Conditions: 150 mM KOAc, 10 mM MgCl2 and 150 mM bicine (pH 8.5), 24 C.
The record gives the reactivity of an RNA of 177 nucleotides to 2A3 and DMS.
It was measured as part of the RMDB library TTRDES.
For DMS, 5,544 sequencing reads were counted.
Reactivities are given for positions 27 through 126.
RNA sequence: GGGAACGACUCGAGUAGAGUCGAAAAGAUAUGGACGAUAUACAGCGAUGAGUGGUGUGUCGGAAACGACACCCACGAGCUGUAUCGUCCUAAGUCAAAGGAUUUUCCUGUUCGCAGGAAAAUCCAACACAAUCCCUAUCUUCGGAUAGGGAUUGUGAAAAGAAACAACAACAACAAC
Reactivity to 2A3 in 0.01 (KOAc 150mM, MgCl2 10mM, bicine 150mM(pH8.5), 24C), signal-to-noise 3, nucleotides 027 to 126: g010a000u020a010u040g000g000a000c010g000a010u050a030u070a240c020a010g020c010g300a300u300g000a160g000u000g030g000u160g000u000g010u130c000g000g000a000a000a000c000g000a000c000a000c000c010c000a000c000g000a010g010c000u010g000u000a000u000c000g000u000c000c000u000a000a000g000u000c030a110a140a080g000g010a010u020u000u000u010c010c000u010g060u060u130c300g010c060a000g000g010a000a010a010a000u000c000c000a030a010
Reactivity to DMS in 0.01 (KOAc 150mM, MgCl2 10mM, bicine 150mM(pH8.5), 24C), signal-to-noise 3, nucleotides 027 to 126: g000a010u000a030u010g000g000a020c000g000a050u010a090u000a050c050a010g020c000g030a240u020g010a090g010u010g000g000u000g010u000g020u000c020g010g010a000a000a010c000g010a010c000a010c000c000c010a000c000g000a010g030c000u000g010u000a010u000c000g010u000c010c000u000a000a040g000u000c000a140a140a190g010g000a020u000u000u000u000c000c000u000g000u000u010c280g000c000a010g000g010a010a000a000a000u000c000c010a070a100